[RMDB]
RNA sequence: GGGAACGACUCGAGUAGAGUCGAAAAGAAGCCAUUACUGAAGAGUGGCGUAUGGCACCCGGUCCGCUUGAAGUGGCCUGGUUUGCGGAAGAGACGGCUGCCGUCGAGCGUGCUGUUGAUGCCCUGAUUGCCCGAUCAGUUUCGACUGAUCGGGCAAAAAAGAAACAACAACAACAAC
Reactivity to 2A3 in 0.01 (KOAc 150mM, MgCl2 10mM, bicine 150mM(pH8.5), 24C), signal-to-noise 1, nucleotides 027 to 126: g090a000a000g000c000c000a030u100u080a050c110u140g030a130a030g080a030g130u030g030g030c000g000u010a190u110g000g000c000a000c020c000c000g000g050u060c060c000g020c000u030u100g030a020a000g000u000g000g000c000c000u100g000g140u060u140u150g100c010g030g060a010a010g010a100g020a060c020g000g010c000u000g040c000c200g260u100c070g060a020g020c070g020u020g000c000u020g000u080u010g040a200u100g060c000c000c000u070g040a070
Reactivity to DMS in 0.01 (KOAc 150mM, MgCl2 10mM, bicine 150mM(pH8.5), 24C), signal-to-noise 1, nucleotides 027 to 126: g010a090a170g020c010c030a030u020u080a120c040u000g050a160a060g000a010g040u000g000g000c020g000u120a000u010g030g050c040a140c080c110c040g000g000u020c110c000g000c020u000u030g000a300a110g000u000g000g000c010c000u000g030g000u030u040u000g040c010g000g040a110a130g000a060g000a200c070g000g000c000u000g020c000c020g000u050c030g000a080g000c030g080u000g000c000u000g030u000u010g000a170u130g000c000c000c000u000g000a170